Background:
Structure probing data (DMS and 2A3) for a 207-nucleotide construct. Values cover nucleotides 27 to 156. DMS adducts were read by reverse transcription with MarathonRT.
[RMDB]
RNA sequence: GGGAACGACUCGAGUAGAGUCGAAAAACAGAAAAAAGGAGUUUAAAUUAGAUUUGCAAACGGACGGUACUAAAUACCGUCACUUUUACGUGUAACUUAUCGUUAACUCUGCAAAAAGAAAACAAGAAAAACAAGCGUGAGUUCGCUCACGCUUGAACACAUGAUUGGUGUUCGCACCAAUCAUGUGAAAAGAAACAACAACAACAAC
Reactivity to DMS in 0.01 (KOAc 150mM, MgCl2 10mM, bicine 150mM(pH8.5), 24C), signal-to-noise 2, nucleotides 027 to 156: a120c030a190g030a000a000a080a040a130a130g020g040a040g010u000u010u000a050a020a210u000u000a090g020a110u000u000u000g010c000a130a110a110c170g040g030a030c000g030g040u000a040c000u000a060a030a300u000a000c000c010g040u010c020a020c030u010u000u010u000a140c050g010u000g000u020a040a050c030u000u010a030u000c030g010u000u000a020a000c010u000c010u000g000c110a000a110a080a150a130g000a000a070a050a080c040a070a150g000a040a020a030a080a160c000a030a090g010c000g070u030g010a010g010u000u010c300g030c020u000c020a030c010g010c020u000u000g000a000a140
Reactivity to 2A3 in 0.01 (KOAc 150mM, MgCl2 10mM, bicine 150mM(pH8.5), 24C), signal-to-noise 3, nucleotides 027 to 156: a000c040a030g110a040a120a000a010a010a040g040g010a040g000u110u140u160a050a100a070u100u110a030g040a080u030u010u100g040c040a070a080a030c030g050g000a000c010g000g010u030a040c050u220a050a120a120u060a010c000c010g000u000c000a040c000u030u030u090u100a030c050g000u010g010u060a070a040c020u020u030a020u070c000g020u010u010a000a000c000u000c010u050g020c040a020a070a020a020a020g120a030a080a010a020c040a030a040g080a100a130a050a000a010c010a000a000g000c000g000u010g000a000g000u050u110c230g000c070u000c000a000c000g000c010u000u000g000a000a000

For DMS, 2,122 sequencing reads were counted. For 2A3, 2,750 sequencing reads were counted.